[RMDB]
RNA sequence: GGGAACGACUCGAGUAGAGUCGAAAAAAGAUAUGGAUGUCGGGCUACACAGUAACCCGUUGAACCCUCGGAAACGAGCUCAGCGUGUGCCUACCUGUAUAGUCUCUAGCGUGCAUCCUAAGUCAAAGGUAAACAUACACUUCGGUGUAUGUUUACCAAAAGAAACAACAACAACAAC
Reactivity to 2A3 in 0.01 (KOAc 150mM, MgCl2 10mM, bicine 150mM(pH8.5), 24C), signal-to-noise 2, nucleotides 027 to 126: a000a000g090a070u110a050u140g020g000a010u010g020u000c050g010g000g030c010u030a020c020a000c000a060g010u020a050a010c000c010c000g000u000u010g000a010a010c100c000c030u000c000g020g010a070a030a040c010g000a000g010c010u010c030a010g020c010g050u110g100u210g120c020c050u080a130c010c020u020g000u010a000u020a010g040u020c000u000c070u200a070g080c110g210u230g000c030a000u000c000c020u020a100a020g050u010c020a090a050a020
Reactivity to DMS in 0.01 (KOAc 150mM, MgCl2 10mM, bicine 150mM(pH8.5), 24C), signal-to-noise 3, nucleotides 027 to 126: a120a070g010a050u030a300u010g000g000a020u000g030u000c050g000g020g000c010u000a010c020a030c020a010g000u000a140a080c010c020c000g020u000u000g000a010a050c100c260c010u010c010g000g000a060a120a230c020g010a010g030c300u000c010a000g020c000g000u000g010u020g020c070c070u020a150c290c050u000g020u010a050u000a010g010u000c000u010c190u010a120g020c210g020u000g020c000a010u000c000c000u000a050a060g000u000c070a070a100a080

Chemical mapping of a 177-nucleotide RNA with 2A3 and DMS. DMS adducts were read by reverse transcription with MarathonRT. Source: RMDB library TTRDEL, as collected in RNAgym. The 2A3 profile rests on 3,216 reads.